RNA sequence: GGGAACGACUCGAGUAGAGUCGAAAAAGGUGCACGGCCACAAACAGAGAGGUUGUGAGUCGCGCAAGCGGAAGUCUCAGCACGCAGUUCCGCUCUGCGAAGCAACGCUGCCGCUUCCUCUCUCAGACCACUCAGCGUGGUUCGCCACGCUGAGUGGAAAAGAAACAACAACAACAAC
Reactivity to 2A3 in 0.01 (KOAc 150mM, MgCl2 10mM, bicine 150mM(pH8.5), 24C), signal-to-noise 3, nucleotides 027 to 126: a000g080g020u070g020c020a000c020g030g000c030c020a020c000a030a150a010c090a010g150a010g010a010g050g020u000u000g000u000g050a130g020u000c000g000c010g000c030a000a010g000c000g000g020a030a020g120u070c010u010c080a050g110c110a020c070g070c050a020g000u080u130c020c030g020c020u000c060u020g010c010g040a070a040g020c050a080a000c070g000c050u060g020c000c000g000c000u040u010c040c000u000c000u010c000u010c000a010g050a160
Chemical mapping of a 177-nucleotide RNA with 2A3. The 2A3 profile rests on 1,933 reads. Values cover nucleotides 27 to 126.